[RMDB]
RNA sequence: GGGAACGACUCGAGUAGAGUCGAAAAGGAGGCAAGUUCGCUUGCCUCCAAAGAAGCUCAAAUUGACGCAAACAUCGGCGUCAUCGCGAGCAAGCGAGGAAAAAACCGUGAACUUCGGUUCACGGAACACCAGUUAUAGGUUCGCCUAUAACUGGUGAAAAGAAACAACAACAACAAC
Reactivity to 2A3 in 0.01 (KOAc 150mM, MgCl2 10mM, bicine 150mM(pH8.5), 24C), signal-to-noise 3, nucleotides 027 to 126: g020g000a000g010g000c000a000a000g050u030u040c090g000c030u000u010g000c000c000u000c000c000a010a000a000g000a020a020g000c010u000c010a040a060a150u080u040g000a000c010g000c030a130a300a260c100a300u210c240g080g000c000g000u000c000a010u000c010g010c030g020a010g000c000a020a020g080c030g110a150g110g000a060a110a010a010a040a040c010c010g000u010g000a000a000c000u050u060c190g080g010u000u000c000a000c000g000g000a000a010
Reactivity to DMS in 0.01 (KOAc 150mM, MgCl2 10mM, bicine 150mM(pH8.5), 24C), signal-to-noise 6, nucleotides 027 to 126: g010g000a010g010g010c000a010a010g020u000u010c180g040c000u000u010g010c000c010u000c000c000a010a030a070g010a120a130g010c010u010c010a030a290a080u000u000g010a010c000g000c000a070a110a160c290a110u020c250g000g000c000g010u000c000a000u000c130g010c300g000a010g030c010a060a050g010c070g010a110g000g000a000a080a070a060a080a100c000c000g000u000g000a010a010c000u000u010c170g020g010u000u000c000a000c000g000g000a030a070
About this RNA
The record gives the reactivity of an RNA of 177 nucleotides to 2A3 and DMS. It was measured as part of the RMDB library M2PK50. For 2A3, 4,870 sequencing reads were counted. The RNA was probed in 150 mM KOAc, 10 mM MgCl2 and 150 mM bicine (pH 8.5) at 24 C. As a SHAPE reagent, 2A3 marks flexible, mostly unpaired nucleotides at the ribose 2'-OH.